[RMDB]
RNA sequence: GGGAACGACUCGAGUAGAGUCGAAAAGGAAGUCGUGGUCACCGCCGGCCUCGAUCUUGACGCCGUUGCUGAACUGGCUGAUGCCGUACUGGCAGUCCGCAUAGGUGAUGGCAUAUCGGCCGGGUGCACUAUGGGACGUAUUCGUACGUCCCAUAGUAAAAGAAACAACAACAACAAC
Reactivity to DMS in 0.01 (KOAc 150mM, MgCl2 10mM, bicine 150mM(pH8.5), 24C), signal-to-noise 7, nucleotides 027 to 126: g000g010a060a050g020u010c020g020u000g010g010u020c040a130c070c050g010c060c010g010g010c010c010u030c090g000a020u030c140u020u000g010a140c180g020c010c000g010u020u000g000c010u000g010a120a200c300u010g000g000c000u010g000a150u010g000c000c010g000u050a110c200u050g000g000c000a030g000u010c060c080g000c020a040u010a250g000g010u000g000a010u010g000g000c000a100u010a030u020c030g000g000c010c020g010g000g010u010g000c170
Reactivity to 2A3 in 0.01 (KOAc 150mM, MgCl2 10mM, bicine 150mM(pH8.5), 24C), signal-to-noise 9, nucleotides 027 to 126: g100g040a060a030g040u060c030g030u060g030g040u090c040a030c100c030g080c030c010g020g000c000c030u070c100g040a080u040c050u080u170g090a080c100g000c010c010g010u020u010g000c000u040g010a150a120c050u080g050g000c010u020g020a060u040g010c010c020g080u190a220c110u170g010g000c010a030g120u030c010c030g010c040a060u070a090g000g010u040g020a020u020g000g000c030a020u030a010u140c010g000g000c010c000g010g010g020u060g010c020